Conditions: 150 mM KOAc, 10 mM MgCl2 and 150 mM bicine (pH 8.5), 24 C.
Structure probing data (2A3) for a 207-nucleotide construct.
Source: RMDB library OK3TST, as collected in RNAgym.
Reactivities are rounded to 0.1 and cut off at 0 and 3.
Reactivities are given for positions 27 through 156.
[RMDB]
RNA sequence: GGGAACGACUCGAGUAGAGUCGAAAAAACUUAAUAGCAACGCCUUUCAGUAUUGCUCGUGAUACGGGGAUAGUGUCUAUGCCAGAAUCUUUUGAGGCAUCAGCGGGAGAAGUAGGCGCUCCAGCGACGGUGGGAGGCGGUGUCCUCAACAUUAACGAGUUUACAUGCUGUUCGCAGCAUGUAAACUAAAAGAAACAACAACAACAAC
Reactivity to 2A3 in 0.01 (KOAc 150mM, MgCl2 10mM, bicine 150mM(pH8.5), 24C), signal-to-noise 1, nucleotides 027 to 156: a010a010c140u150u010a090a040u180a170g000c040a020a010c010g030c000c000u000u110u150c090a110g070u090a060u030u100g090c070u080c150g080u240g030a060u040a140c050g040g080g000g000a080u050a260g060u020g000u010c000u000a050u020g020c000c000a050g060a260a140u060c050u000u190u090u160g160a120g000g070c030a030u030c050a000g010c020g010g090g000a020g000a020a150g040u160a060g000g000c060g000c030u060c030c000a020g000c020g060a060c090g000g010u090g000g000g000a000g010g030c120g010g020u010g000u010c000c010u040c040a150a050c080a180u130u100a110a050c080g020